[RMDB]
RNA sequence: GGGAACGACUCGAGUAGAGUCGAAAACCACCGGAUUCAGCAUGACGCACGCGUCGGUGGGCUGCCCGGCGUUCGGCGACAUCUCGAUGUUGCCCACGACCACCCCGCUCGGCUCGCAGCCGUGGAGGUGCGCAUCGGGGUUCGCCCCGAUGCGCACAAAAGAAACAACAACAACAAC
Reactivity to 2A3 in 0.01 (KOAc 150mM, MgCl2 10mM, bicine 150mM(pH8.5), 24C), signal-to-noise 2, nucleotides 027 to 126: c010c010a000c010c000g090g030a040u230u120c030a120g010c110a110u170g060a080c050g000c050a040c060g040c050g030u010c010g030g030u000g000g030g040c040u060g000c010c000c000g010g020c000g000u070u180c040g000g000c020g020a060c040a150u040c050u000c090g160a060u060g000u000u180g010c000c000c000a000c040g140a120c000c000a060c060c000c000c000g040c000u050c030g040g040c030u070c130g090c070a030g000c010c000g000u010g080g110a050g040